Description
Chemical mapping of a 207-nucleotide RNA with 2A3. Conditions: 150 mM KOAc, 10 mM MgCl2 and 150 mM bicine (pH 8.5), 24 C. Reactivities are given for positions 27 through 156. It was measured as part of the RMDB library OK3TST.
RNA sequence: GGGAACGACUCGAGUAGAGUCGAAAAAUGGAAAAGGGCAUGGGCGGGGCCGCGCUCAAGUCGGGCGAAACCACGCGCGGCGCGAUCAAGAACAUGGGCGCGGCGUUCGCGCGUCUGGGCGAGAAGAUCAUUGUCCCGCUCCUGCCCAAGUUCAACGGUUGAUUACAGUUUUCGAACUGUAAUCAACAAAAGAAACAACAACAACAAC
Reactivity to 2A3 in 0.01 (KOAc 150mM, MgCl2 10mM, bicine 150mM(pH8.5), 24C), signal-to-noise 2, nucleotides 027 to 156: a010u080g030g040a030a040a150a200g000g000g000c040a040u050g000g010g040c040g020g000g010g000c030c000g000c010g020c000u000c020a040a100g060u020c010g020g120g020c000g040a080a070a050c150c020a130c060g060c020g060c030g190g000c030g020c030g000a060u110c070a070a050g080a240a060c050a120u130g030g060g020c000g010c000g010g010c040g000u010u010c010g020c000g000c000g010u000c030u020g000g000g000c010g000a040g050a170a130g030a070u180c030a170u190u190g000u020c000c000c010g000c010u000c000c000u000g000c030c000c000a000a000g000u000u040c020a060a020c050g080